[RMDB]
RNA sequence: GGGAACGACUCGAGUAGAGUCGAAAACGGUGUUCGGGAUGACGUUGACGACGACUUCCAGGAUGUUGGCCCGGUUCCAAACCACCAUAUCGCCAUUGAGGCCGACGCCGGUAUCAGCCGCAGUGAAUCUUAGCACCCUAUUCGUAGGGUGCUAAGAAAAAGAAACAACAACAACAAC
Reactivity to DMS in 0.01 (KOAc 150mM, MgCl2 10mM, bicine 150mM(pH8.5), 24C), signal-to-noise 3, nucleotides 027 to 126: c040g010g020u010g010u000u000c040g020g020g010a050u000g010a090c070g000u000u010g030a110c220g020a130c040g000a100c040u020u000c010c030a100g040g010a070u000g010u000u010g020g020c030c040c060g020g010u000u000c050c050a090a100a170c080c050a120c010c020a050u010a070u000c020g010c080c010a090u010u000g000a080g000g020c030c040g000a040c070g000c030c020g000g010u010a090u000c080a070g000c040c020g030c100a050g010u000g010a100a170
Reactivity to 2A3 in 0.01 (KOAc 150mM, MgCl2 10mM, bicine 150mM(pH8.5), 24C), signal-to-noise 1, nucleotides 027 to 126: c020g000g000u040g010u100u060c060g020g010g000a030u060g020a020c010g000u040u080g170a030c100g010a010c000g050a030c000u050u000c000c000a030g190g000a040u110g040u100u050g010g010c010c020c000g050g010u100u000c060c020a160a090a040c030c020a000c000c010a060u030a060u140c050g050c050c030a050u000u170g060a090g060g000c000c000g000a000c010g060c010c000g000g000u020a060u070c030a020g020c000c050g000c040a040g040u090g170a090a080

Conditions: 150 mM KOAc, 10 mM MgCl2 and 150 mM bicine (pH 8.5), 24 C.
An RNA of 177 nucleotides, treated with DMS and 2A3 and read out base by base.
For 2A3 the reverse transcriptase was SuperScript II with manganese.